This 177-nucleotide RNA was probed chemically with 2A3 and DMS. The data come from the RNA Mapping Database (RMDB), library TTRDEL. Reactivities are given for positions 27 through 126. The reactions ran in a buffer of 150 mM KOAc, 10 mM MgCl2 and 150 mM bicine (pH 8.5), at 24 C. For 2A3 the reverse transcriptase was SuperScript II with manganese.
RNA sequence: GGGAACGACUCGAGUAGAGUCGAAAAGAUAUGGAUACCAGGGAGCUGAAUGUCGGAAACGACAUUACAGCUUUGAUCUGGACGUCCUAAGUCAAAACGUUAACAAACCUUCGGGUUUGUUAACGAACUAGUUCUAAUCCUUCGGGAUUAGAACUAGAAAAGAAACAACAACAACAAC
Reactivity to 2A3 in 0.01 (KOAc 150mM, MgCl2 10mM, bicine 150mM(pH8.5), 24C), signal-to-noise 2, nucleotides 027 to 126: g000a000u020a010u040g000g000a000u010a030c010c000a020g000g010g010a020g010c000u020g000a010a010u010g010u000c000g000g000a020a000a000c010g000a000c010a010u030u030a090c030a010g000c000u040u040u000g000a000u000c000u030g040g200a300c100g000u000c000c000u000a010a010g000u000c020a030a090a050a070c010g000u000u010a010a000c000a010a000a010c010c030u060u090c300g110g000g000u000u000u000g000u000u000a000a000c000g010a000a000
Reactivity to DMS in 0.01 (KOAc 150mM, MgCl2 10mM, bicine 150mM(pH8.5), 24C), signal-to-noise 3, nucleotides 027 to 126: g000a010u000a010u010g000g010a010u000a110c000c000a010g010g000g010a010g030c000u000g000a050a010u000g010u000c000g030g010a000a000a010c010g010a010c000a000u000u000a060c000a010g030c010u000u000u010g000a060u010c000u000g000g010a090c200g010u000c000c000u010a010a120g000u000c010a090a080a110a220c010g000u000u000a010a010c000a010a000a000c000c000u000u000c210g040g010g000u000u000u010g010u000u000a000a000c000g010a040a090